[RMDB]
RNA sequence: GGGAACGACUCGAGUAGAGUCGAAAAUCAUUUGUGGCUGAUGUAGCUUAUAAUUCACAGUACUAGCAAUGACAGGGGAAAAUUUCACUAGUCAGGGGUAACAGUUAUAGGGUCACUGUGCUCAGCCCGUUAGACGUUGAUUCGUCAACGUCUAACGAAAAGAAACAACAACAACAAC
Reactivity to DMS in 0.01 (KOAc 150mM, MgCl2 10mM, bicine 150mM(pH8.5), 24C), signal-to-noise 4, nucleotides 027 to 126: u010c070a050u010u010u000g020u000g030g020c020u000g030a120u010g030u000a070g010c040u000u010a070u000a050a080u010u000c080a130c120a100g010u000a040c030u000a050g030c150a110a090u000g010a110c060a080g000g000g010g000a050a080a060a100u000u000u020c110a060c040u010a050g010u000c030a090g000g000g000g000u000a030a100c140a050g000u000u000a030u000a040g010g000g010u010c070a060c090u000g020u010g000c090u000c080a120g000c050c040
Reactivity to 2A3 in 0.01 (KOAc 150mM, MgCl2 10mM, bicine 150mM(pH8.5), 24C), signal-to-noise 3, nucleotides 027 to 126: u080c010a020u070u080u230g070u050g030g000c010u020g010a120u090g040u040a010g000c000u080u080a080u060a130a080u110u080c070a050c000a160g040u030a020c050u030a050g060c060a110a080u040g030a070c040a090g000g000g050g140a020a100a060a100u100u140u090c050a020c030u010a040g000u010c000a030g000g000g040g050u030a050a020c010a030g020u000u030a070u080a070g100g000g030u010c010a000c040u020g000u020g020c010u010c040a010g000c000c000